[RMDB]
RNA sequence: GGGAACGACUCGAGUAGAGUCGAAAAUGGUGUUAAGUGGAAUAAGUGGAAAAAUAUACAUAUAUGUACAGGGGGCUACAUAUAUGUAUAUGCCCCCUCGGAGCAGUAUAAGUAGGUAUAAGGUGGAGAUAAUAGGUAAUUUCGAUUACCUAUUAUCAAAAGAAACAACAACAACAAC
Reactivity to DMS in 0.01 (KOAc 150mM, MgCl2 10mM, bicine 150mM(pH8.5), 24C), signal-to-noise 6, nucleotides 027 to 126: u010g010g010u000g020u010u020a040a110g000u010g010g010a090a050u020a070a090g010u020g000g000a020a080a070a080a030u010a020u010a020c000a010u010a020u010a020u000g000u000a050c130a110g000g010g000g000g020c140u000a020c020a020u010a030u010a020u000g010u010a010u010a020u000g010c070c020c010c020c010u000c050g000g000a060g010c030a050g010u010a040u010a030a080g010u010a020g010g010u010a030u020a040a070g000g020u000g000g010a220
Reactivity to 2A3 in 0.01 (KOAc 150mM, MgCl2 10mM, bicine 150mM(pH8.5), 24C), signal-to-noise 6, nucleotides 027 to 126: u120g040g010u030g020u100u090a120a080g030u060g070g070a080a070u110a140a060g030u130g050g040a070a070a030a080a020u050a000u010a010c010a010u030a000u010a000u040g010u020a020c080a100g030g000g000g040g010c010u000a000c000a010u040a000u020a010u030g000u010a000u000a000u010g000c000c000c000c000c000u000c020g010g000a020g020c020a000g030u080a030u020a160a040g070u090a030g040g050u070a110u050a130a060g050g030u040g020g020a080
Chemical mapping of a 177-nucleotide RNA with DMS and 2A3. Reactivities are given for positions 27 through 126. The 2A3 profile rests on 6,291 reads. The reactions ran in a buffer of 150 mM KOAc, 10 mM MgCl2 and 150 mM bicine (pH 8.5), at 24 C.